[RMDB]
RNA sequence: GGGAACGACUCGAGUAGAGUCGAAAAACGCGUCGGCUACGGCCGACGCGAAGAUUUGCAUAUAGUGUAGUAUGCAACUAAAAAUAAAGAAAUACACGUCAAGAACAGUCCGGUACGACGGACUGAAAAAAGGACUCUUUCUUCGGAAAGAGUCCAACGCAAUCUUUAAGUUCGCUUAAAGAUUGCGAAAAGAAACAACAACAACAAC
Reactivity to 2A3 in 0.01 (KOAc 150mM, MgCl2 10mM, bicine 150mM(pH8.5), 24C), signal-to-noise 1, nucleotides 027 to 156: a020c010g020c030g040u000c050g000g010c040u150a270c300g180g000c020c010g000a000c000g000c000g010a000a000g010a090u040u040u040g000c000a000u000a010u010a170g000u010g000u040a020g000u000a010u000g000c000a000a010c040u200a020a000a000a000a240u230a050a090a000g120a040a060a000u000a000c000a000c020g210u230c110a060a060g020a150a110c000a030g000u000c000c000g000g080u140a130c150g020a040c000g090g010a010c000u000g000a050a010a000a000a000a010g000g000a000c000u000c000u000u000u020c010u010u040c140g040g000a000a000a000g000a000g000u000c000c000a000a000

Chemical mapping of a 207-nucleotide RNA with 2A3. 2A3 adducts were read by reverse transcription with SuperScript II with manganese. High 2A3 reactivity points to a flexible backbone, as in loops and unpaired stretches. It was measured as part of the RMDB library M2RFPK.